RNA sequence: GGGAACGACUCGAGUAGAGUCGAAAAGGUAGGGUUUGAGGCCCCUGUUCCUGAGGACUUGAGUGCUGUUUUACAUACGGGUCAGACACGGCUAGAGGCCAAGGUCAAGUUGAAAGCUGCAGUCUAGGAGAUGGCAUCUUUUCGAAGAUGCCAUCUCAAAAGAAACAACAACAACAAC
Reactivity to 2A3 in 0.01 (KOAc 150mM, MgCl2 10mM, bicine 150mM(pH8.5), 24C), signal-to-noise 2, nucleotides 027 to 126: g090g060u110a010g000g060g050u010u080u120g200a120g050g040c030c000c000c000u030g060u090u000c020c000u000g000a050g030g000a040c040u060u100g000a000g060u000g010c000u040g050u000u090u080u070a080c090a020u060a070c030g000g050g000u020c030a030g030a050c090a000c050g010g000c020u060a060g030a030g070g000c010c020a020a000g070g000u000c000a000a020g050u020u020g100a180a060a000g000c000u020g000c010a000g000u020c070u080a060g090
Reactivity to DMS in 0.01 (KOAc 150mM, MgCl2 10mM, bicine 150mM(pH8.5), 24C), signal-to-noise 2, nucleotides 027 to 126: g010g010u000a030g030g000g010u010u040u030g010a040g020g000c100c010c030c020u000g000u000u010c000c020u030g020a100g000g000a100c050u010u030g020a100g000u000g000c010u010g020u000u010u000u030a080c110a110u030a060c090g000g000g000u020c110a050g030a090c050a060c050g010g010c010u020a100g010a160g020g000c090c010a060a090g020g000u000c040a040a100g000u000u010g000a120a060a030g000c000u000g000c040a050g000u000c030u030a120g010